This 207-nucleotide RNA was probed chemically with 2A3 and DMS. The DMS profile rests on 3,728 reads. For DMS the reverse transcriptase was MarathonRT. The RNA was probed in 150 mM KOAc, 10 mM MgCl2 and 150 mM bicine (pH 8.5) at 24 C.
[RMDB]
RNA sequence: GGGAACGACUCGAGUAGAGUCGAAAAUAGCGAAGUAGGAUUUUAUGCGUCAAGUGUUCACAGGCUGGGGAGUCCCCGUGAAACGAAAAGCAGAAAGCGUGCUGCUUACGAUAUAAUUUCCGCACCCAUAAGAAGUCUCUGUUCGCAGAGACUUCAAACUAAAGACGUGGUUCGCCACGUCUUUAGUAAAAGAAACAACAACAACAAC
Reactivity to 2A3 in 0.01 (KOAc 150mM, MgCl2 10mM, bicine 150mM(pH8.5), 24C), signal-to-noise 5, nucleotides 027 to 156: u120a020g040c030g060a080a010g040u100a080g030g020a020u020u020u010u020a020u070g000c010g020u040c070a090a050g020u060g020u220u030c000a010c010a050g040g010c050u100g040g000g000g070a100g110u180c010c000c010c030g010u010g020a030a010a010c030g020a030a040a010a010g000c010a010g070a090a180a020g120c110g070u120g050c010u000g000c000u010u020a000c010g040a010u010a000u010a110a040u030u020u010c010c000g000c030a040c000c020c020a040u090a110a070g000a010a000g000u000c000u000c000u000g040u050u070c210g010c050a000g000a000g000a000c000u000u000c000a000a000
Reactivity to DMS in 0.01 (KOAc 150mM, MgCl2 10mM, bicine 150mM(pH8.5), 24C), signal-to-noise 2, nucleotides 027 to 156: u000a100g010c040g020a060a060g020u010a100g010g000a040u000u010u000u000a070u010g020c020g010u000c090a070a180g020u000g010u000u000c010a020c010a080g010g040c030u010g010g000g040g020a160g010u000c040c010c000c040g030u010g000a020a010a080c030g000a260a050a050a050g050c020a020g000a030a040a150g010c120g020u010g030c010u000g010c010u000u010a030c010g020a080u000a050u000a030a040u000u000u000c010c000g010c070a140c040c020c000a160u010a080a140g000a050a020g010u000c000u000c000u010g010u000u020c290g060c040a020g000a030g010a010c000u000u000c010a010a040